This 207-nucleotide RNA was probed chemically with 2A3 and DMS. The DMS profile rests on 3,727 reads.
[RMDB]
RNA sequence: GGGAACGACUCGAGUAGAGUCGAAAAGGGGUCUUAACUCAGUACGAUGAUUGUCAGGCUAGUAGGCUGAAGCCUCCACGGCCUACGAAAGCCUUGGAUUUAUCAUCGGAACCGUUAAGACGGAGGCACCCAAAAGUCUGCAUGUUCGCAUGCAGACGGUACACUUAGUCUUCGGACUAAGUGUACCAAAAGAAACAACAACAACAAC
Reactivity to 2A3 in 0.01 (KOAc 150mM, MgCl2 10mM, bicine 150mM(pH8.5), 24C), signal-to-noise 4, nucleotides 027 to 156: g060g010g000g010u000c010u000u000a000a010c000u000c020a000g010u000a010c000g000a010u000g000a000u010u040g040u070c070a030g000g000c010u090a090g010u000a000g010g000c010u020g030a100a020g030c010c010u020c020c000a030c020g010g000c010c000u000a000c000g040a200a080a010g010c010c010u010u080g060g000a010u100u120u140a020u010c010a000u010c010g000g000a000a000c000c010g000u000u000a000a000g000a000c010g000g010a000g000g010c010a050c010c000c000a050a140a010a030g000u000c000u000g010c000a010u000g010u050u130c300g010c150a000u000g000c000a000g000a000c000
Reactivity to DMS in 0.01 (KOAc 150mM, MgCl2 10mM, bicine 150mM(pH8.5), 24C), signal-to-noise 2, nucleotides 027 to 156: g020g010g030g030u000c020u000u000a000a020c000u000c030a170g030u000a260c020g000a050u000g020a010u010u010g020u000c070a040g000g050c010u000a300g020u000a010g020g010c000u000g020a050a100g000c020c010u000c010c050a300c000g010g010c020c000u000a020c010g000a160a160a160g020c000c000u000u010g000g020a090u010u000u010a020u020c020a040u000c000g070g000a130a090c200c300g000u000u000a010a060g020a040c030g020g020a050g010g030c030a160c000c000c010a080a080a080a150g020u000c020u010g000c000a000u010g000u000u010c300g020c000a060u000g000c000a010g000a000c000

For DMS the reverse transcriptase was MarathonRT. The 2A3 profile rests on 10,412 reads. High DMS reactivity at an A or C suggests that its Watson-Crick edge is free. The reactions ran in a buffer of 150 mM KOAc, 10 mM MgCl2 and 150 mM bicine (pH 8.5), at 24 C. It was measured as part of the RMDB library RNAMAK. Reactivities are given for positions 27 through 156.